[RMDB]
RNA sequence: GGGAACGACUCGAGUAGAGUCGAAAACAGAACGUUGCGAACCGGGCGUCGACCGAAGUCCUGCAAAAGGUCACCCAGGGUAAUUUUAACCUUGGUGUUGCUUUAGCAGAGGCCAGGUCGACAGCCUCACAACUCGCGACGCAAACCAUUGCGCUCGGUUGCUAAAUAUCUUCGGAUAUUUAGCAACAAAAGAAACAACAACAACAAC
Reactivity to DMS in 0.01 (KOAc 150mM, MgCl2 10mM, bicine 150mM(pH8.5), 24C), signal-to-noise 1, nucleotides 027 to 156: c070a150g030a110a070c010g010u000u000g000c010g000a060a130c060c030g000g030g020c000g030u000c010g000a060c000c010g000a050a170g000u010c000c020u020g000c010a060a200a080a080g010g010u000c180a030c020c020c020a070g000g030g020u080a030a140u000u000u000u010a080a080c010c000u010u000g020g010u010g020u010u000g020c000u000u000u000a300g000c060a020g000a080g050g000c020c040a170g020g030u000c000g000a020c000a000g050c050c030u000c040a060c100a070a130c090u000c000g020c010g000a040c000g020c030a040a160a110c070c050a300u000u000g000c000g010c010u000c040g000
Reactivity to 2A3 in 0.01 (KOAc 150mM, MgCl2 10mM, bicine 150mM(pH8.5), 24C), signal-to-noise 4, nucleotides 027 to 156: c060a030g120a130a030c000g000u000u000g000c000g010a020a030c050c060g010g000g000c000g000u010c000g000a000c010c000g040a040a000g010u000c010c000u000g000c000a050a050a010a010g010g010u050c010a010c020c010c020a000g050g010g030u090a080a200u140u240u110u220a060a060c000c000u000u010g000g020u110g010u110u090g030c000u010u010u010a010g000c010a000g070a220g030g000c020c020a000g000g000u030c000g010a000c000a000g000c000c000u060c010a100c010a020a060c020u000c000g000c010g000a000c010g000c020a060a080a010c040c020a090u070u230g060c150g020c090u090c090g050